This 177-nucleotide RNA was probed chemically with 2A3 and DMS. The RNA was probed in 150 mM KOAc, 10 mM MgCl2 and 150 mM bicine (pH 8.5) at 24 C.
[RMDB]
RNA sequence: GGGAACGACUCGAGUAGAGUCGAAAACUUCGGUUUAUCAUUCUUGUGCUAUGCUAGGUUAUGAGAAGGCUCUAAAAACAAACAGCGAUUUUGAGUUCACUGUGAGAUGGAUGGUUCACUCUGAUGACACUUCUUGGCAUUUCGAUGCCAAGAAGUGAAAAGAAACAACAACAACAAC
Reactivity to 2A3 in 0.01 (KOAc 150mM, MgCl2 10mM, bicine 150mM(pH8.5), 24C), signal-to-noise 1, nucleotides 027 to 126: c030u060u040c040g110g020u040u020u030a100u050c020a050u060u070c050u090u130g020u040g000c030u040a030u140g080c020u050a100g000g140u090u050a030u100g060a100g020a150a090g030g050c020u010c020u080a120a120a020a020a030c070a050a160a020c030a030g030c000g060a050u000u000u010u220g140a110g040u040u030c050a030c110u080g070u060g100a080g100a170u060g050g000a000u070g000g030u070u100c030a010c040u040c030u070g080a140u160g000a080
Reactivity to DMS in 0.01 (KOAc 150mM, MgCl2 10mM, bicine 150mM(pH8.5), 24C), signal-to-noise 2, nucleotides 027 to 126: c020u000u020c140g030g010u000u010u000a030u010c060a090u000u040c040u010u000g010u020g000c030u010a060u000g010c070u010a040g020g020u010u010a040u020g000a090g010a100a070g000g040c030u000c050u000a030a070a060a110a100c100a090a060a050c070a070g010c040g010a100u000u010u000u010g010a080g020u000u000c020a030c060u000g010u010g010a110g030a100u000g000g000a060u000g020g010u000u000c070a040c070u010c040u000g020a100u000g010a260
Record summary
For 2A3, 884 sequencing reads were counted. Values cover nucleotides 27 to 126.